[RMDB]
Chemical mapping of a 177-nucleotide RNA with DMS. Reactivities are rounded to 0.1 and cut off at 0 and 3.
RNA sequence: GGGAACGACUCGAGUAGAGUCGAAAAGGUUGAAGGGAACCGCAGGACAGAGCUUAGGAGACUAGACUGUGGAGGGAGGAUUCUCAGGUAGAUAUGAGGCAGGCACCGGGCUGAGAGGCUGCCACCACCAUCCUCCAGUGUUCGCACUGGAGGAUGGAAAAGAAACAACAACAACAAC
Reactivity to DMS in 0.01 (KOAc 150mM, MgCl2 10mM, bicine 150mM(pH8.5), 24C), signal-to-noise 1, nucleotides 027 to 126: g000g040u000u000g010a120a100g030g000g000a100a080c010c090g000c070a090g050g000a120c120a120g000a080g020c050u000u000a100g000g010a210g000a120c050u000a040g040a120c090u010g000u020g030g030a120g020g000g000a070g010g000a080u000u000c040u010c040a020g040g010u010a030g000a100u000a080u020g000a050g020g000c060a080g010g000c050a060c030c020g040g030g020c020u000g000a110g010a060g000g010c050u010g000c020c040a090c080c120a170
The data come from the RNA Mapping Database (RMDB), library OK2TST. Values cover nucleotides 27 to 126. The reactions ran in a buffer of 150 mM KOAc, 10 mM MgCl2 and 150 mM bicine (pH 8.5), at 24 C. For DMS the reverse transcriptase was MarathonRT. For DMS, 910 sequencing reads were counted.